[RMDB]
The record gives the reactivity of an RNA of 177 nucleotides to DMS and 2A3. The RNA was probed in 150 mM KOAc, 10 mM MgCl2 and 150 mM bicine (pH 8.5) at 24 C. For DMS the reverse transcriptase was MarathonRT. It was measured as part of the RMDB libraries RFM100 and RFMREP. Reactivities are given for positions 27 through 126. DMS (dimethyl sulfate) methylates the pairing face of unpaired adenines and cytosines.
RNA sequence: GGGAACGACUCGAGUAGAGUCGAAAAUAAGAUGCUGAUAAUGAGUAAGGAACCUUAAAGUUAAUCGUUCCCUGUCUCUCCGCAGAACCUACUGGACAAAACAGGACAGUAAGUGGACAAAAACCUAUCAGAAAGUUAGAUUCGUCUAACUUUCUGAAAAAGAAACAACAACAACAAC
Reactivity to DMS in 0.01 (KOAc 150mM, MgCl2 10mM, bicine 150mM(pH8.5), 24C), signal-to-noise 6, nucleotides 027 to 126: u040a070a100g010a090u010g010c020u020g020a090u040a070a090u010g020a050g020u010a110a090g010g000a050a050c030c070u000u020a070a090a220g010u030u000a060a080u010c130g000u000u000c010c000c020u010g000u010c020u000c040u000c050c070g000c060a060g000a090a050c040c020u000a020c010u000g010g000a120c020a040a070a090a160c250a090g000g000a100c030a020g000u010a030a050g020u000g010g010a120c120a030a060a050a080a110c080c080u010a110
Reactivity to 2A3 in 0.01 (KOAc 150mM, MgCl2 10mM, bicine 150mM(pH8.5), 24C), signal-to-noise 8, nucleotides 027 to 126: u140a030a020g070a050u060g010c010u000g030a040u070a230a100u150g020a070g040u030a040a060g030g030a030a020c020c010u080u060a220a090a030g050u130u160a090a090u090c020g010u010u010c010c000c000u010g110u020c010u000c010u020c020c020g000c020a020g020a070a040c010c000u000a020c010u020g010g010a020c010a030a110a030a030c080a080g040g030a000c000a000g000u030a100a040g040u070g040g010a020c060a010a070a010a030a050c020c030u070a070